[RMDB]
RNA sequence: GGGAACGACUCGAGUAGAGUCGAAAAGCCACUCAUCGAAACAAGAGGGACCUCGCCAACAAACUGGAGGUUUACUCCGAAAAGGAGGGGGAGACCAAGAUAACCAUGGGGUUCCAACCCAUCAAGGGUUGAUUCAACCUUUCGAGGUUGAAUCAACAAAAGAAACAACAACAACAAC
Reactivity to DMS in 0.01 (KOAc 150mM, MgCl2 10mM, bicine 150mM(pH8.5), 24C), signal-to-noise 2, nucleotides 027 to 126: g000c050c080a000c070u010c000a060u030c070g010a220a030a060c260a110a110g000a100g000g000g000a090c010c000u000c070g000c130c060a050a080c140a040a060a170c280u000g000g000a080g010g030u030u000u060a170c010u000c010c000g000a130a050a090a160g040g060a130g000g010g000g030g000a100g030a160c020c050a100a060g010a080u020a100a040c080c140a050u000g010g030g000g030u010u020c100c040a050a040c000c010c000a020u050c140a070a170g000g030
Reactivity to 2A3 in 0.01 (KOAc 150mM, MgCl2 10mM, bicine 150mM(pH8.5), 24C), signal-to-noise 4, nucleotides 027 to 126: g040c010c000a080c010u070c020a140u130c050g130a140a100a030c070a110a060g010a070g100g020g010a020c000c010u030c040g080c100c050a130a120c050a070a300a030c060u140g080g000a030g030g000u010u070u110a110c010u040c020c030g100a180a090a010a010g080g010a050g010g010g000g020g000a110g010a000c000c020a030a050g060a150u120a120a040c020c030a060u100g010g000g000g000u130u000c030c020a020a050c040c000c000a090u120c100a090a070g070g050
Structure probing data (DMS and 2A3) for a 177-nucleotide construct. Reactivities are given for positions 27 through 126. The reactions ran in a buffer of 150 mM KOAc, 10 mM MgCl2 and 150 mM bicine (pH 8.5), at 24 C. The 2A3 profile rests on 3,114 reads. For 2A3 the reverse transcriptase was SuperScript II with manganese.